[RMDB]
RNA sequence: GGGAACGACUCGAGUAGAGUCGAAAAGAUAUGGAUCCUAAAAAUGAGCACCUCCCCACCUCGGAAACGAGAGGGUGAACUACUCAUAAUAGGAUCCUAAGUCAAAACGACUGGUUCGCCAGUCGAAGUAAUUACUCGUCUUCGGACGAGUAAUUACAAAAGAAACAACAACAACAAC
Reactivity to 2A3 in 0.01 (KOAc 150mM, MgCl2 10mM, bicine 150mM(pH8.5), 24C), signal-to-noise 1, nucleotides 027 to 126: g040a000u110a040u140g000g000a000u030c050c010u030a010a080a050a060a050u040g000a010g020c040a040c000c000u060c030c030c000c010a200c100c030u010c010g030g000a060a090a020c030g000a000g010a020g030g010g000u060g000a020a010c050u120a030c000u080c000a020u010a060a040u030a070g020g010a000u010c000c010u000a020a010g020u000c060a020a000a130a170c010g000a010c010u000g000g120u090u110c300g050c090c000a030g010u010c000g020a070a000
Reactivity to DMS in 0.01 (KOAc 150mM, MgCl2 10mM, bicine 150mM(pH8.5), 24C), signal-to-noise 2, nucleotides 027 to 126: g000a020u010a300u000g020g000a000u010c000c000u000a000a030a040a110a010u000g000a020g010c040a130c110c050u010c040c010c030c020a260c180c000u020c000g020g000a120a050a120c030g000a020g010a280g010g010g000u030g010a040a090c110u000a170c000u000c000a010u020a020a300u000a000g020g000a000u000c000c010u000a000a030g000u000c030a090a030a080a130c020g020a020c000u000g000g020u010u030c120g030c000c000a040g000u000c000g000a040a090
This 177-nucleotide RNA was probed chemically with 2A3 and DMS.
For 2A3 the reverse transcriptase was SuperScript II with manganese.
Values cover nucleotides 27 to 126.
For 2A3, 1,945 sequencing reads were counted.
The reactions ran in a buffer of 150 mM KOAc, 10 mM MgCl2 and 150 mM bicine (pH 8.5), at 24 C.